RNA sequence: GGGAACGACUCGAGUAGAGUCGAAAAGAUAUGGAUCGUGACCCUCGUCAUCAUGAGGCGUUGAAAUUUAGUUUCUCGGAAACGAGAAACUAAAUGGAGCCUUGCACGGCGAGCACGAUCCUAAGUCGGUUACUAUCAUGUUCGCAUGAUAGUAACCAAAAGAAACAACAACAACAAC
Reactivity to 2A3 in 0.01 (KOAc 150mM, MgCl2 10mM, bicine 150mM(pH8.5), 24C), signal-to-noise 2, nucleotides 027 to 126: g090a050u170a070u290g010g000a000u020c020g030u010g150a230c120c030c000u000c010g020u020c000a180u000c060a080u300g050a000g010g000c010g030u110u080g000a060a000a000u010u000u010a010g000u000u010u000c000u000c000g050g030a070a050a060c000g000a010g000a000a010a000c000u000a000a000a000u000g000g060a010g000c000c000u000u000g040c090a100c130g020g000c010g000a000g000c000a000c000g000a000u020c000c000u000a050a020g150u080c060
Reactivity to DMS in 0.01 (KOAc 150mM, MgCl2 10mM, bicine 150mM(pH8.5), 24C), signal-to-noise 2, nucleotides 027 to 126: g020a090u010a300u010g000g010a000u000c010g010u000g000a230c200c260c110u000c020g030u000c030a070u010c120a160u040g020a020g010g020c000g000u010u020g010a090a070a000u000u000u000a000g010u000u000u000c000u000c000g010g000a090a100a270c000g010a000g000a020a000a000c000u000a000a000a000u000g020g020a090g000c000c000u010u000g050c300a080c200g020g000c010g000a020g030c010a000c020g010a030u000c000c000u000a000a070g030u010c130